[RMDB]
RNA sequence: GGGAACGACUCGAGUAGAGUCGAAAAUCGCGAUCUUUUCGUGGUCGGAGAUCACUUGCUCGGCCAGCACGAGAUCGGCCUGCAGCAAGGCUUGGGUGGCCCGCUCCAUGGCGAUGCCUGCUAGCCCUAACGCCAUCCGAUUCGUCGGAUGGCGUUAAAAAGAAACAACAACAACAAC
Reactivity to 2A3 in 0.01 (KOAc 150mM, MgCl2 10mM, bicine 150mM(pH8.5), 24C), signal-to-noise 1, nucleotides 027 to 126: u010c030g000c010g040a100u110c120u000u150u190u120c030g010u060g060g050u020c030g130g030a030g000a030u140c070a000c120u060u170g020c060u020c000g030g040c000c000a070g060c090a060c170g140a150g010a130u030c000g010g030c010c030u020g050c030a030g000c020a080a100g000g050c000u110u100g060g010g000u060g010g040c030c000c010g000c000u000c000c070a090u100g000g040c040g020a010u140g050c000c040u040g020c010u020a040g040c000c000c000
Reactivity to DMS in 0.01 (KOAc 150mM, MgCl2 10mM, bicine 150mM(pH8.5), 24C), signal-to-noise 1, nucleotides 027 to 126: u020c080g010c020g000a050u000c130u020u000u000u010c150g020u000g000g010u000c010g000g010a160g000a030u000c120a210c080u010u000g010c060u000c020g020g000c000c020a110g000c050a120c220g020a110g010a030u000c100g000g020c030c000u000g010c240a050g000c060a090a030g010g000c020u000u000g000g000g080u000g000g000c060c040c140g040c100u000c000c060a050u000g030g000c000g000a110u020g020c050c020u000g020c040u020a110g000c000c040c060
This 177-nucleotide RNA was probed chemically with 2A3 and DMS. The data come from the RNA Mapping Database (RMDB), library OK2TRN. For DMS the reverse transcriptase was MarathonRT. The RNA was probed in 150 mM KOAc, 10 mM MgCl2 and 150 mM bicine (pH 8.5) at 24 C. Values are in units of 0.01, from 0 to 300, in steps of 10. The 2A3 profile rests on 1,194 reads. For DMS, 1,108 sequencing reads were counted.